[RMDB]
RNA sequence: GGGAACGACUCGAGUAGAGUCGAAAAGAGCAAGCGAGUAGCGAGAAGCAUCAACACCAAUUGCAUCAACUAAAUCGUCAAUCGUAAUAACGUUUCCAGCACGCUUACUCAUGCGCACAGGCUUACCCGCGAUGCUCAUAUUCGUAUGAGCAUCGCGAAAAGAAACAACAACAACAAC
Reactivity to 2A3 in 0.01 (KOAc 150mM, MgCl2 10mM, bicine 150mM(pH8.5), 24C), signal-to-noise 2, nucleotides 027 to 126: g030a000g010c020a020a040g050c010g020a030g060u050a030g030c000g010a030g080a070a000g020c000a000u120c020a010a060c040a050c070c010a030a030u050u080g000c000a000u040c000a010a110c030u170a110a100a130u070c060g090u020c040a010a050u050c050g060u120a150a000u200a090a070c020g000u000u030u000c050c000a020g010c020a000c060g070c000u040u060a010c000u020c030a030u150g020c110g000c010a050c030a080g070g010c010u010u040a030c020c010
Reactivity to DMS in 0.01 (KOAc 150mM, MgCl2 10mM, bicine 150mM(pH8.5), 24C), signal-to-noise 2, nucleotides 027 to 126: g000a030g040c030a020a070g000c060g000a030g030u010a090g010c060g010a060g010a140a100g000c000a010u000c020a050a060c140a080c180c090a020a160u000u000g000c060a060u020c090a070a070c140u000a100a080a170u000c060g010u000c020a060a110u000c160g010u030a000a090u030a080a300c010g000u000u000u000c070c010a140g020c020a080c060g030c010u000u010a030c060u010c020a040u000g000c140g000c040a120c060a160g010g050c000u040u000a130c000c030